Chemical mapping of a 207-nucleotide RNA with 2A3.
RNA sequence: GGGAACGACUCGAGUAGAGUCGAAAAACCGAUGAAUUGCCGAGAAGCCUGGCUCGAAAUCGUCGACGCAUCGACGACGGUCCUGCCAUGAGACCGUAACGAGGACAUGUCGCCUCGAAUGGCGUCGUAUAACAUGAGUGGUUCGCCACUCAUGUAAUAGACUGCAAACUUUCGAGUUUGCAGUCUAAAAAGAAACAACAACAACAAC
Reactivity to 2A3 in 0.01 (KOAc 150mM, MgCl2 10mM, bicine 150mM(pH8.5), 24C), signal-to-noise 1, nucleotides 027 to 156: a000c030c040g030a010u040g050a010a150u110u200g010c000c000g010a040g010a140a090g060c100c140u170g090g000c110u110c100g070a060a020a100u000c010g000u000c000g000a020c030g010c220a110u030c010g020a020c040g000a000c000g040g000u000c000c000u050g020c000c000a020u010g010a000g020a040c000c030g020u060a000a000c020g030a020g000g000a010c020a200u300g060u260c050g000c030c050u000c000g000a000a020u040g020g080c000g000u060c020g000u000a140u050a300a000c000a000u000g000a000g000u000g010g010u050u050c100g010c050c000a020c000u000c010a000u000g000u000a000a000
As a SHAPE reagent, 2A3 marks flexible, mostly unpaired nucleotides at the ribose 2'-OH. The RNA was probed in 150 mM KOAc, 10 mM MgCl2 and 150 mM bicine (pH 8.5) at 24 C.